[RMDB]
RNA sequence: GGGAACGACUCGAGUAGAGUCGAAAAACUGCCAUACGUGGCAGAAACACGCCUUACUAGGACUAAACAGCGUGUCUAAAAAACAGUCCUUCAUACCUGAUCUGGAGGGUAGAUCAGGAAUACUAAAAAAAUCGGGUGAAGUUCGCUUCACCCGAAAGAACUGUUGAACGUUCGCGUUCAACAGUUCAAAAGAAACAACAACAACAAC
Reactivity to 2A3 in 0.01 (KOAc 150mM, MgCl2 10mM, bicine 150mM(pH8.5), 24C), signal-to-noise 2, nucleotides 027 to 156: a000c000u000g000c020c000a030u040a080c160g070u040g010g030c000a000g020a010a030a000c000a000c000g000c000c000u050u050a030c050u070a000g010g000a000c010u100a100a070a020c010a010g000c000g010u000g010u050c120u060a000a000a000a010a000a000c020a000g000u000c020c000u040u070c030a020u040a090c000c000u000g020a000u010c000u030g060g000a070g070g070g040u100a020g000a010u010c040a000g000g000a020a000u070a050c060u150a030a010a040a090a000a080a130u000c010g000g020g000u000g000a010a020g040u080u090c120g040c100u010u000c000a000c000c000c040g000a000a000a000